[RMDB]
RNA sequence: GGGAACGACUCGAGUAGAGUCGAAAAGGCGCCACUGAGCACCGACAACUCCGUCACACUGGAUUGACCGAAGUUGAACAUCAGGCCCGGAUUCGCCGACGGAAGAUACGGAUACGUAUUGGGUAGCACCUUGGCAUCUCUUCGGAGAUGCCAAGGUAAAAGAAACAACAACAACAAC
Reactivity to DMS in 0.01 (KOAc 150mM, MgCl2 10mM, bicine 150mM(pH8.5), 24C), signal-to-noise 2, nucleotides 027 to 126: g000g000c050g000c160c020a080c040u010g010a010g020c180a130c060c040g090a110c030a160a130c030u000c040c180g010u000c050a030c070a100c100u020g000g000a120u020u000g000a110c010c050g000a040a140g040u010u010g000a160a230c130a050u000c090a050g000g000c020c040c020g000g000a100u010u000c060g000c100c020g000a110c020g030g000a070a020g060a030u030a010c050g000g000a070u070a060c020g000u000a000u000u000g010g000g000u000a070g020c060
Reactivity to 2A3 in 0.01 (KOAc 150mM, MgCl2 10mM, bicine 150mM(pH8.5), 24C), signal-to-noise 2, nucleotides 027 to 126: g020g000c080g010c010c030a080c110u080g080a050g030c040a060c030c000g080a010c040a040a040c000u030c030c000g030u050c000a040c000a000c070u110g010g020a110u100u020g060a030c000c010g000a090a070g030u050u070g080a090a060c050a100u050c040a050g040g000c020c000c060g000g000a100u190u140c030g010c040c020g100a070c010g050g060a010a060g000a020u050a010c010g000g030a060u030a190c040g020u010a030u050u100g060g010g010u090a040g050c020
Source: RMDB library OK1LIB, as collected in RNAgym.
Chemical mapping of a 177-nucleotide RNA with DMS and 2A3.
The DMS profile rests on 1,489 reads.
The RNA was probed in 150 mM KOAc, 10 mM MgCl2 and 150 mM bicine (pH 8.5) at 24 C.
The 2A3 profile rests on 956 reads.